[RMDB]
The record gives the reactivity of an RNA of 177 nucleotides to DMS.
Source: RMDB library OK2TST, as collected in RNAgym.
RNA sequence: GGGAACGACUCGAGUAGAGUCGAAAAGCUGGAGUGCCCCCCAUUGUUGAGGCUAAGAAGGAGCCACUUCCAAAUGUGCCAACCAAGCGUGUUGAUAAAGGUAAAGACAAAGCGAGCUCAAGUGAAGCUCGGGUUAGUAGUUCGCUACUAACCCGAGAAAAGAAACAACAACAACAAC
Reactivity to DMS in 0.01 (KOAc 150mM, MgCl2 10mM, bicine 150mM(pH8.5), 24C), signal-to-noise 1, nucleotides 027 to 126: g040c030u000g000g020a080g000u000g000c010c000c000c020c040c030a080u010u000g000u000u000g000a110g000g010c020u000a100a100g030a110a120g020g000a040g010c040c050a050c070u000u020c050c090a030a120a060u000g020u000g030c040c030a030a120c050c040a060a070g010c040g010u010g000u020u020g000a120u010a030a040a060g000g000u000a010a070a120g000a050c080a060a080a060g000c050g000a050g000c010u000c040a030a080g020u010g000a130a120g000